[RMDB]
RNA sequence: GGGAACGACUCGAGUAGAGUCGAAAACGGCCGAAAUCGUUCAGACUGAAUUUACUGGCCGGUGAAAGGGGGCGAUUGAACUUCUGGUCCUUGUAGUACACCGAGGGGUCCUCACGAUACUGGCCAACCUAUCGGGUCGGUUCGCCGACCCGAUAGGAAAAGAAACAACAACAACAAC
Reactivity to 2A3 in 0.01 (KOAc 150mM, MgCl2 10mM, bicine 150mM(pH8.5), 24C), signal-to-noise 2, nucleotides 027 to 126: c020g040g000c030c090g080a000a020a040u090c030g040u030u010c040a030g000a070c050u170g090a150a020u090u070u160a260c100u030g050g030c000c010g000g000u000g070a040a090a020g070g000g020g010g000c040g050a010u020u150g100a080a040c050u010u010c100u140g030g040u040c000c010u040u060g040u020a020g030u090a080c050a000c090c000g020a040g000g050g000g000u040c000c000u030c020a100c050g010a090u110a100c020u010g000g000c000c020a040a040